[RMDB]
RNA sequence: GGGAACGACUCGAGUAGAGUCGAAAAGGGAGAUCCGAGCAGAGGCAUAGCGAACUGCGCACGGAGAAGCCUUGAGGGAAUGCCGUAGGACCCGGGUUCGAUUCCCGGCUGCUCCACCGAAGGGCCAGGUCAUCAGCCAGUUCGCUGGCUGAUGACCAAAAGAAACAACAACAACAAC
Reactivity to 2A3 in 0.01 (KOAc 150mM, MgCl2 10mM, bicine 150mM(pH8.5), 24C), signal-to-noise 1, nucleotides 027 to 126: g020g040g000a060g010a030u000c010c000g000a000g020c040a030g030a030g000g130c070a120u110a110g010c080g060a060a000c030u060g010c020g020c010a010c080g060g000a050g000a040a000g000c000c000u000u020g060a010g000g010g000a060a120u040g010c000c000g060u100a040g030g000a020c010c000c000g000g000g000u100u190c060g040a110u110u140c000c010c010g000g000c010u010g000c020u000c000c010a070c020c000g000a000a000g030g000g000c050c000a000
Reactivity to DMS in 0.01 (KOAc 150mM, MgCl2 10mM, bicine 150mM(pH8.5), 24C), signal-to-noise 1, nucleotides 027 to 126: g040g000g010a060g080a240u000c040c000g000a270g010c040a110g010a150g000g010c000a120u000a040g020c090g000a040a000c050u000g000c110g000c040a040c090g000g000a080g000a090a300g040c000c000u000u120g000a270g020g020g040a050a030u000g010c110c020g010u010a110g040g010a030c130c000c040g000g000g000u000u040c210g000a220u030u000c040c000c000g000g040c190u030g060c020u000c070c000a050c000c000g030a190a030g010g000g000c000c220a140
About this RNA
Structure probing data (2A3 and DMS) for a 177-nucleotide construct. The 2A3 profile rests on 802 reads. The reactions ran in a buffer of 150 mM KOAc, 10 mM MgCl2 and 150 mM bicine (pH 8.5), at 24 C. For 2A3 the reverse transcriptase was SuperScript II with manganese.